[RMDB]
RNA sequence: GGGAACGACUCGAGUAGAGUCGAAAACCGUCCUGGCUCUCUUCGCCGGGGGAGCUCCCUCCCCAUCCUUGUCCUUUCUUAUUAUUCCUCGGAUGUUCCCCAGCCAGGGAUUGUCCUCCUCGAGUCUACAGCAUUUCGUUCGCGAAAUGCAAAAGAAACAACAACAACAAC
Reactivity to DMS in 0.01 (KOAc 150mM, MgCl2 10mM, bicine 150mM(pH8.5), 24C), signal-to-noise 2, nucleotides 027 to 129: c000c130g030u030c050c070u030g000g000c000u040c100u030c060u040u040c090g010c070c080g030g020g010g030g000a000g030c000u000c050c000c040u020c000c000c000c000a090u030c100c060u040u040g020u040c040c030u000u000u000c030u080u010a050u050u040a090u000u000c020c010u010c060g000g010a060u030g010u050u000c030c020c010c080a000g020c060c040a070g000g000g040a060u070u040g000u020c010c000u020c050c010u020c010g000a050g040u000c000u080a000c060a090
Reactivity to 2A3 in 0.01 (KOAc 150mM, MgCl2 10mM, bicine 150mM(pH8.5), 24C), signal-to-noise 7, nucleotides 027 to 129: c020c000g050u070c010c030u010g010g010c010u030c000u020c030u150u140c110g030c050c040g000g010g010g000g010a020g000c040u060c010c010c010u020c010c010c000c000a090u070c010c020u070u080g090u100c010c000u070u140u090c060u070u130a210u110u040a080u040u070c000c000u010c020g030g030a080u090g010u040u030c000c000c000c000a000g000c010c000a020g000g020g000a010u010u080g030u020c000c000u010c020c000u000c000g000a000g000u030c000u030a040c030a040